The record gives the reactivity of an RNA of 207 nucleotides to 2A3. The RNA was probed in 150 mM KOAc, 10 mM MgCl2 and 150 mM bicine (pH 8.5) at 24 C.
RNA sequence: GGGAACGACUCGAGUAGAGUCGAAAAAUUCGCUGGAUGCAUUCAAGAAAGCAUGUCCAAGUGACAUUGGUCGUGUUACCCUUGUCACUAUGAACAAAAACCACUUGCAGGUGUGGGAUGCCCUUAACAGGACAGUUGUCCGCACCACUACUGACUACAUGGAGUGGGGAUUCGUCCCCACUCCAUGAAAAGAAACAACAACAACAAC
Reactivity to 2A3 in 0.01 (KOAc 150mM, MgCl2 10mM, bicine 150mM(pH8.5), 24C), signal-to-noise 2, nucleotides 027 to 156: a000u080u090c060g050c060u050g010g000a030u030g080c080a040u000u070c050a080a060g030a110a130a010g050c010a010u050g020u000c000c000a030a000g010u000g000a000c000a010u000u000g040g000u050c140g140u170g040u230u070a010c010c000c000u000u000g010u000c000a000c030u070a260u140g000a000a000c000a030a110a000a090a110c000c030a030c140u020u190g100c070a080g130g030u060g000u100g000g000g020a100u120g000c020c010c010u100u050a090a050c020a080g000g100a000c000a060g000u060u070g010u080c100c000g000c040a050c030c000a020c040u100a050c000u140g300a180c050u000a000
2A3 is a SHAPE reagent: it acylates the 2'-hydroxyl of flexible nucleotides of all four kinds. Values cover nucleotides 27 to 156.